[RMDB]
RNA sequence: GGGAACGACUCGAGUAGAGUCGAAAAGAAAGAAAGAAAGGAACCUUCGAUUACCUUAUCCGUUGUAGCCAAAGUUCAACGAAGCGGCAACUUUGGCACUCCGCAGAUAAGGCAAUCGAUUGUUUAAACUGUGCUGCACUUUCGAGUGCAGCACAGUAAAAGAAACAACAACAACAAC
Reactivity to 2A3 in 0.01 (KOAc 150mM, MgCl2 10mM, bicine 150mM(pH8.5), 24C), signal-to-noise 2, nucleotides 027 to 126: g070a000a090a020g180a030a050a030g100a020a120a030g110g030a030a020c000c000u000u000c010g000a000u010u010a000c000c000u000u000a000u010c000c000g010u000u020g010u040a020g000c000c000a000a000a000g000u030u050c080a160a140c150g120a220a020g150c090g070g000c100a010a000c000u000u000u000g000g010c050a130c000u030c020c000g030c090a020g000a010u000a000a000g000g000c000a000a000u000c000g000a000u000u010g000u000u050u030a230a300

This 177-nucleotide RNA was probed chemically with 2A3.
The data come from the RNA Mapping Database (RMDB), library RFM100.
The 2A3 profile rests on 887 reads.
Conditions: 150 mM KOAc, 10 mM MgCl2 and 150 mM bicine (pH 8.5), 24 C.